[RMDB]
RNA sequence: GGGAACGACUCGAGUAGAGUCGAAAAUACUCGGCCAGUACAGGUACAGUAGACGAUCCAGUACAUGAUCGCAGCGGAUCGCGCGAUCGGCCUGCGCAUGCGCGAGCUGGCCGGCCGCGCGUGAGGCAUCGCCAUAAUUGUUCGCAAUUAUGGCGAUAAAAGAAACAACAACAACAAC
Reactivity to 2A3 in 0.01 (KOAc 150mM, MgCl2 10mM, bicine 150mM(pH8.5), 24C), signal-to-noise 3, nucleotides 027 to 126: u070a020c000u020c060g000g010c020c010a070g050u160a080c060a110g010g040u070a180c020a040g080u100a050g040a050c040g000a010u020c050c030a050g110u160a090c090a180u180g030a030u040c040g000c110a030g000c010g010g010a010u010c000g000c000g000c010g020a000u010c000g000g000c000c000u050g000c030g000c030a090u300g120c050g010c030g150a080g170c300u030g000g000c000c000g000g000c000c000g000c020g000c010g000u000g010a020g000g040c020
Reactivity to DMS in 0.01 (KOAc 150mM, MgCl2 10mM, bicine 150mM(pH8.5), 24C), signal-to-noise 5, nucleotides 027 to 126: u010a070c040u000c080g030g010c030c020a110g020u010a090c120a100g010g010u010a090c090a080g010u000a060g020a130c070g000a060u010c020c070a100g010u010a080c160a090u010g020a040u010c020g020c190a140g020c020g000g000a220u000c000g020c000g010c000g000a010u000c030g000g000c000c000u000g000c020g000c030a110u000g000c180g010c040g010a090g010c040u000g000g010c000c010g010g010c040c010g000c000g000c010g010u000g000a300g000g010c020